[RMDB]
RNA sequence: GGGAACGACUCGAGUAGAGUCGAAAAAGAGCCGACGAACCUUCCAACCUUCCAACCUUCCAACCUUCGAACCUUCCAACCUUCCAAUCUACUCGAGAGGAGGAGGAGGAGGAGGAGGAGGACAUAAUAGUCUUUAGUUCUUCGGAACUAAAGACUAAAAAGAAACAACAACAACAAC
Reactivity to DMS in 0.01 (KOAc 150mM, MgCl2 10mM, bicine 150mM(pH8.5), 24C), signal-to-noise 1, nucleotides 027 to 126: a000g000a220g010c000c110g040a060c040g000a040a030c010c010u000u000c070c030a060a150c120c040u000u000c010c000a100a110c050c050u000u030c070c030a080a030c070c000u000u030c000g000a140a070c020c050u000u000c000c050a030a070c040c030u000u070c010c000a140a130u000c030u000a010c080u050c040g010a010g000a200g000g000a160g020g000a070g000g020a120g040g050a080g010g020a080g000g000a140g000g000a110g000g030a300c160a030u000a040a130
Reactivity to 2A3 in 0.01 (KOAc 150mM, MgCl2 10mM, bicine 150mM(pH8.5), 24C), signal-to-noise 1, nucleotides 027 to 126: a000g090a030g080c030c030g070a080c030g050a090a050c000c020u040u030c010c000a030a030c010c000u000u000c020c030a100a090c040c000u040u000c010c020a100a090c020c040u000u000c010g060a120a100c000c010u040u060c020c020a030a050c020c020u110u000c010c000a060a050u000c020u080a110c020u030c030g020a030g000a020g080g050a030g010g020a030g020g030a090g040g000a020g040g030a030g020g010a010g010g040a020g020g030a010c000a050u300a140a110